Chemical mapping of a 177-nucleotide RNA with DMS and 2A3.

[RMDB]
RNA sequence: GGGAACGACUCGAGUAGAGUCGAAAAUGCCAUCUUGGCCGCGAUCUCACUGGUGGUUUCGGUGUCGCUGCUGUUCACGCGUACCGACACCAGCAAACUUUCUACCCCAACCACUGGACGGUCCACACACGUCGAGUGGUUUCGACCACUCGACGUGAAAAGAAACAACAACAACAAC
Reactivity to DMS in 0.01 (KOAc 150mM, MgCl2 10mM, bicine 150mM(pH8.5), 24C), signal-to-noise 2, nucleotides 027 to 126: u000g000c000c000a060u010c130u000u000g000g000c040c060g000c120g000a080u000c040u000c080a240c060u000g020g050u000g010g020u020u000u000c030g020g000u000g000u000c000g020c080u000g000c150u000g010u000u020c160a050c150g070c060g030u000a000c130c010g000a040c000a020c000c000a030g030c130a050a090a060c100u010u000u010c100u000a190c030c030c000c080a080a080c040c020a070c010u000g000g000a030c060g010g000u010c070c040a070c120a110
Reactivity to 2A3 in 0.01 (KOAc 150mM, MgCl2 10mM, bicine 150mM(pH8.5), 24C), signal-to-noise 2, nucleotides 027 to 126: u090g000c000c000a080u080c140u100u150g040g000c060c020g050c040g020a030u050c050u030c040a070c030u020g000g000u020g000g110u080u060u120c120g000g000u060g110u090c010g000c000u000g000c010u090g130u300u160c060a030c100g020c020g000u040a020c030c010g000a000c000a000c000c000a010g040c030a020a100a030c070u150u170u000c040u080a140c000c010c000c010a000a020c000c020a030c020u010g010g000a020c020g020g020u000c080c000a030c000a000